[RMDB]
RNA sequence: GGGAACGACUCGAGUAGAGUCGAAAACCGAGUGUGGCCAGGCCAGCGAGCCUGGUACGGUAAAAACGCCUCGUGCUGACCAGGUUUGGUCGGGGGUCAACCCGCAGCCAAUCCUGCUCCUACCUGGGAGCCGGUGCUGUUCACAGACUAGAUGGCGCUCAUUAGUGAAGUUCGCUUCACUAAUGAGAAAAGAAACAACAACAACAAC
Reactivity to 2A3 in 0.01 (KOAc 150mM, MgCl2 10mM, bicine 150mM(pH8.5), 24C), signal-to-noise 2, nucleotides 027 to 156: c020c010g020a080g010u280g000u040g050g020c020c020a010g000g020c040c050a120g190c090g070a070g010c010c000u000g060g000u010a010c000g010g030u080a060a090a020a040a000c000g020c000c030u060c070g100u140g030c070u030g010a020c000c000a160g160g100u140u290u070g010g000u050c050g010g000g010g020g020u070c080a160a180c010c000c010g020c030a010g020c010c010a040a100u170c020c000u000g000c000u010c000c000u080a300c000c060u130g050g000g000a000g010c000c000g020g000u050g000c000u000g000u040u040c040a060c010a060g040a030c070u060a040g020a130u150g020g010c010g000
Reactivity to DMS in 0.01 (KOAc 150mM, MgCl2 10mM, bicine 150mM(pH8.5), 24C), signal-to-noise 1, nucleotides 027 to 156: c020c010g000a110g060u000g020u010g050g010c050c000a060g040g000c020c040a210g030c130g000a180g030c000c000u060g010g040u000a010c000g000g000u000a010a040a090a010a050c060g040c020c000u000c070g010u000g010c030u020g000a080c080c000a100g020g020u010u000u010g030g030u000c030g040g000g010g010g010u000c100a070a130c030c000c260g030c010a060g020c010c040a060a060u000c000c000u000g010c020u010c000c000u000a120c130c130u000g040g030g010a040g000c000c100g020g010u020g030c000u010g050u000u000c010a140c060a120g000a140c050u000a110g010a110u030g000g010c020g000

Conditions: 150 mM KOAc, 10 mM MgCl2 and 150 mM bicine (pH 8.5), 24 C. This 207-nucleotide RNA was probed chemically with 2A3 and DMS. The DMS profile rests on 2,439 reads. Reactivities are given for positions 27 through 156. For 2A3, 1,068 sequencing reads were counted.